RNA sequence: GGGAACGACUCGAGUAGAGUCGAAAAGACUGAAGUUAGUCCGGUUUAGGUAUGAGAAUGAUUGGAGCACCUCUCCAGAUGUUCCAGAUGUAAUGAAACCGGUGCAAGCUUCAAGCUCUUGAGGUGUGCUUCUGGUUACAUUCGUGUAACCAGAAGCAAAAGAAACAACAACAACAAC
Reactivity to DMS in 0.01 (KOAc 150mM, MgCl2 10mM, bicine 150mM(pH8.5), 24C), signal-to-noise 1, nucleotides 027 to 126: g000a000c010u000g010a010a000g000u000u000a300g000u000c020c010g000g000u000u000u000a070g000g050u010a070u010g030a150g000a020a080u040g000a120u050u000g000g010a010g000c210a080c120c040u000c180u040c110c090a020g000a100u010g010u000u000c000c000a110g000a160u010g000u010a100a030u040g000a030a020a010c000c000g000g000u040g020c030a020a070g000c000u000u000c000a000a040g010c080u000c000u000u010g000a060g000g000u020g050u000
Reactivity to 2A3 in 0.01 (KOAc 150mM, MgCl2 10mM, bicine 150mM(pH8.5), 24C), signal-to-noise 5, nucleotides 027 to 126: g010a010c020u010g000a010a000g010u020u040a020g050u020c000c000g000g100u000u000u040a090g070g060u170a070u110g210a250g060a160a030u130g060a100u100u020g000g000a010g010c050a030c020c010u120c000u010c020c000a020g020a080u080g020u000u010c010c010a000g050a120u170g150u210a120a090u120g080a030a000a000c000c000g000g030u070g010c020a020a010g000c000u010u000c000a000a060g010c040u000c010u000u050g020a030g020g080u090g020u030